[RMDB]
RNA sequence: GGGAACGACUCGAGUAGAGUCGAAAACGUGCUGCACGAGAUCUUUGGGCUGCCCUACCAGCAAAUCGCCACGACGAUUGGCAGCCAGGCCUCCACAUGCCGGCAGCUGGCUCAUCGGGCCCGUCGCACACAGCGCGAUAUUCGUAUCGCGCUGUGUAAAAGAAACAACAACAACAAC
Reactivity to 2A3 in 0.01 (KOAc 150mM, MgCl2 10mM, bicine 150mM(pH8.5), 24C), signal-to-noise 1, nucleotides 027 to 126: c030g100u080g010c030u020g000c030a040c090g060a060g010a120u050c120u120u110u200g110g020g000c010u020g000c010c010c000u080a090c020c040a020g000c050a020a030a060u070c020g050c080c100a090c170g250a090c020g040a110u030u060g000g040c010a000g010c010c010a000g000g010c000c000u100c040c010a080c010a090u150g010c000c030g020g030c000a000g020c010u060g030g000c010u000c010a070u040c060g000g040g000c000c030c000g040u020c010g000c010
Reactivity to DMS in 0.01 (KOAc 150mM, MgCl2 10mM, bicine 150mM(pH8.5), 24C), signal-to-noise 2, nucleotides 027 to 126: c070g010u010g000c030u000g020c060a150c080g010a090g060a020u000c070u020u010u000g010g010g030c000u000g000c000c020c220u000a120c090c050a120g000c080a050a070a030u000c050g040c000c110a180c190g000a100c030g000a040u000u000g000g010c010a040g020c010c030a070g040g010c040c030u000c020c080a070c120a030u000g000c010c030g000g000c070a070g030c050u020g000g010c050u000c060a080u000c030g000g000g000c030c020c080g030u000c060g000c080